[RMDB]
Record summary:
Structure probing data (DMS and 2A3) for a 177-nucleotide construct. For DMS the reverse transcriptase was MarathonRT. Conditions: 150 mM KOAc, 10 mM MgCl2 and 150 mM bicine (pH 8.5), 24 C. It was measured as part of the RMDB library OK1LIB.
RNA sequence: GGGAACGACUCGAGUAGAGUCGAAAAAGAAAGAACGGGUCCAUUUUCAACGACCCGCAGUGGACGUUCUUUUUCAUUCGGUUGCCCGGGAGGUGGGCAAGAAUGCCCUGGGGAUUCUGCUGACCGGCAAAAGACAGAGCUUCGGCUCUGUCUUUUGAAAAGAAACAACAACAACAAC
Reactivity to DMS in 0.01 (KOAc 150mM, MgCl2 10mM, bicine 150mM(pH8.5), 24C), signal-to-noise 2, nucleotides 027 to 126: a030g000a020a030a050g010a060a050c030g000g030g020u010c000c120a100u020u000u040u050c180a130a130c150g000a060c030c020c060g020c090a030g000u010g000g010a040c020g000u000u000c000u030u000u000u000u010c050a080u010u000c040g000g010u020u010g010c020c000c010g000g010g010a110g010g020u050g000g000g040c020a040a030g000a030a020u010g020c010c010c010u010g000g010g030g010a130u010u010c020u000g000c010u010g010a130c060c030g000g050
Reactivity to 2A3 in 0.01 (KOAc 150mM, MgCl2 10mM, bicine 150mM(pH8.5), 24C), signal-to-noise 3, nucleotides 027 to 126: a000g040a000a000a000g020a020a040c030g020g000g080u030c010c030a100u050u040u160u240c120a170a040c090g030a040c010c020c010g000c020a020g010u020g030g010a000c020g010u010u010c010u000u000u000u000u000c020a050u040u090c040g230g010u090u050g020c040c030c050g020g060g030a120g060g090u240g020g000g010c000a000a020g020a050a020u030g000c000c000c010u050g000g000g020g050a050u070u030c030u060g000c000u000g020a050c020c010g040g110